[RMDB]
RNA sequence: GGGAACGACUCGAGUAGAGUCGAAAACAGAGCUGAUGGGCCAAGUACCUAUCCAAAAUGAGAUCCCAUCUUGCACACUGUGCUAAUUUGAGAUUCUCAUGCCUCCUACUUGGAGAGAUCUGGACUACUAACUGUAUGACGUUCGCGUCAUACAGAAGUCCAUCCAUAAGUUCGCUUAUGGAUGGACAAAAGAAACAACAACAACAAC
Reactivity to DMS in 0.01 (KOAc 150mM, MgCl2 10mM, bicine 150mM(pH8.5), 24C), signal-to-noise 3, nucleotides 027 to 156: c020a070g000a050g020c040u000g000a030u000g010g010g030c030c000a090a120g000u000a020c000c000u000a080u000c000c130a050a040a150a050u000g000a050g030a060u000c010c000c000a040u000c090u010u000g010c010a020c020a210c150u000g020u000g000c010u010a020a030u000u000u000g010a020g000a060u000u000c010u010c010a020u000g000c030c040u000c010c000u000a110c130u010u010g000g010a070g010a090g000a030u000c010u000g010g000a170c060u000a190c300u010a070a210c020u000g010u000a020u000g020a030c000g060u000u010c300g010c030g020u000c000a000u000a000c000a000g020a020a080
Reactivity to 2A3 in 0.01 (KOAc 150mM, MgCl2 10mM, bicine 150mM(pH8.5), 24C), signal-to-noise 9, nucleotides 027 to 156: c020a010g030a010g040c070u090g030a030u020g010g010g010c030c060a150a020g040u100a130c010c010u030a030u050c030c040a050a060a010a120u030g000a010g000a010u020c010c010c000a000u010c020u010u020g010c000a010c030a090c160u240g000u010g010c050u140a060a060u020u030u030g040a040g000a040u290u060c010u000c010a010u050g030c000c000u020c000c010u120a270c090u130u200g010g000a010g000a000g010a010u020c020u050g030g030a040c040u090a040c020u060a300a070c000u020g000u000a000u000g000a000c000g010u020u030c180g010c010g110u010c000a000u000a000c000a000g000a010a000